[RMDB]
Chemical mapping of a 177-nucleotide RNA with 2A3 and DMS. The RNA was probed in 150 mM KOAc, 10 mM MgCl2 and 150 mM bicine (pH 8.5) at 24 C. The 2A3 profile rests on 2,870 reads. High DMS reactivity at an A or C suggests that its Watson-Crick edge is free. For 2A3 the reverse transcriptase was SuperScript II with manganese. Values cover nucleotides 27 to 126.
RNA sequence: GGGAACGACUCGAGUAGAGUCGAAAAGAUAUGGAGUCACACUCCUUGGAUUUAUGUAUUGGGAGAACUAAUGUCGGAAACGACAUUAUCCCUCCCAAUACAUUGUCAGGAGGUGACUCCUAAGUCACCUUUUGCAUAGCUUCGGCUAUGCAAAAGGAAAAGAAACAACAACAACAAC
Reactivity to 2A3 in 0.01 (KOAc 150mM, MgCl2 10mM, bicine 150mM(pH8.5), 24C), signal-to-noise 1, nucleotides 027 to 126: g000a020u070a020u220g010g000a000g000u030c000a010c020a130c060u050c020c080u020u100g240g020a090u200u300u300a010u070g000u010a000u000u020g010g050g000a020g000a010a010c090u000a030a020u000g030u000c020g060g000a080a060a050c000g000a000c000a000u000u010a000u030c020c000c010u000c020c040c010a000a000u010a000c000a000u010u000g010u070c020a010g020g000a000g020g000u030g000a000c000u000c000c000u000a010a000g020u030c030a100
Reactivity to DMS in 0.01 (KOAc 150mM, MgCl2 10mM, bicine 150mM(pH8.5), 24C), signal-to-noise 2, nucleotides 027 to 126: g000a090u020a300u000g000g020a020g020u000c000a010c020a240c030u000c030c000u000u020g000g010a030u000u010u000a020u000g000u000a000u000u010g030g000g000a040g010a140a200c300u010a020a010u000g010u030c000g010g000a110a080a300c000g000a010c000a000u000u000a000u000c240c120c000u020c000c000c020a030a000u000a000c000a000u000u000g010u000c000a020g010g020a030g000g030u000g010a010c000u000c010c000u010a010a060g000u000c040a250